Conditions: 150 mM KOAc, 10 mM MgCl2 and 150 mM bicine (pH 8.5), 24 C. Chemical mapping of a 177-nucleotide RNA with 2A3 and DMS. It was measured as part of the RMDB libraries RFM100 and RFMREP. 2A3 adducts were read by reverse transcription with SuperScript II with manganese.
[RMDB]
RNA sequence: GGGAACGACUCGAGUAGAGUCGAAAACUGAGGAUGUUCGUGCCGUCAUUAAUACGCAGGAUGCAAAUCCCUACUGGCGCCGACGCCACAAUCUUGCGGUUGAAUUGCUCAUUCUCUUCCAACUGGAAGUAAGAUGGUUCUUCGGAACCAUCUUACUAAAAGAAACAACAACAACAAC
Reactivity to 2A3 in 0.01 (KOAc 150mM, MgCl2 10mM, bicine 150mM(pH8.5), 24C), signal-to-noise 6, nucleotides 027 to 126: c040u030g010a000g020g040a040u040g020u110u060c060g040u120g080c040c020g040u040c020a060u020u260a110a070u210a170c040g000c030a020g010g030a010u040g050c050a050a070a140u070c000c020c010u080a110c070u030g020g000c010g010c070c130g080a120c030g010c000c010a030c020a010a070u020c020u030u030g010c000g040g040u020u050g060a160a080u090u060g010c010u020c020a020u060u000c000u000c000u030u000c030c020a100a120c070u050g010g030a020
Reactivity to DMS in 0.01 (KOAc 150mM, MgCl2 10mM, bicine 150mM(pH8.5), 24C), signal-to-noise 3, nucleotides 027 to 126: c090u050g000a060g000g000a040u020g030u010u010c070g030u000g030c050c050g020u000c060a100u000u020a070a060u000a170c090g000c050a050g010g000a030u000g020c180a080a110a060u000c020c010c020u000a110c170u010g000g020c020g000c070c080g000a070c110g000c000c030a020c130a100a040u000c020u000u000g020c020g000g000u020u010g000a040a060u010u000g000c030u020c020a070u020u000c010u000c030u030u020c030c020a120a070c090u020g000g020a290